Source: RMDB library M2PK50, as collected in RNAgym. The record gives the reactivity of an RNA of 177 nucleotides to DMS and 2A3. The RNA was probed in 150 mM KOAc, 10 mM MgCl2 and 150 mM bicine (pH 8.5) at 24 C.
RNA sequence: GGGAACGACUCGAGUAGAGUCGAAAAACGCUACCUUUCGAGGUAGCGUCACCUACUUCGCGCAACCGUCGAGUCGUUCCCAUGGUUGCGUGAAGUAGUAUGAGUGGCAGACGUUCGCGUCUGCCAAUCUAUUACUUAACUUCGGUUAAGUAAUAGAAAAAGAAACAACAACAACAAC
Reactivity to DMS in 0.01 (KOAc 150mM, MgCl2 10mM, bicine 150mM(pH8.5), 24C), signal-to-noise 5, nucleotides 027 to 126: a040c000g010c000u000a000c000c010u000u000u010c170g010a030g010g010u000a000g000c000g010u000c050a070c190c000u000a010c010u000u000c010g010c010g010c000a020a020c010c010g020u010c150g000a040g000u000c000g000u000u000c000c000c010a010u000g000g010u000u000g010c000g020u000g010a020a020g010u000a010g010u000a040u010g010a130g020u000g010g020c000a010g010a000c000g030u000u010c210g020c010g010u000c000u000g010c000c000a000a010
Reactivity to 2A3 in 0.01 (KOAc 150mM, MgCl2 10mM, bicine 150mM(pH8.5), 24C), signal-to-noise 3, nucleotides 027 to 126: a010c010g000c000u000a000c010c000u070u050u130c230g100a020g010g010u000a010g010c000g000u010c000a010c010c000u000a000c000u000u000c000g000c000g020c010a000a010c010c020g240u250c140g070a030g000u020c000g000u000u010c000c000c000a000u010g000g000u000u000g000c000g010u020g000a010a000g000u010a000g000u020a150u170g210a060g120u070g000g000c000a000g000a020c010g020u050u030c240g020c010g090u010c000u000g010c010c000a000a000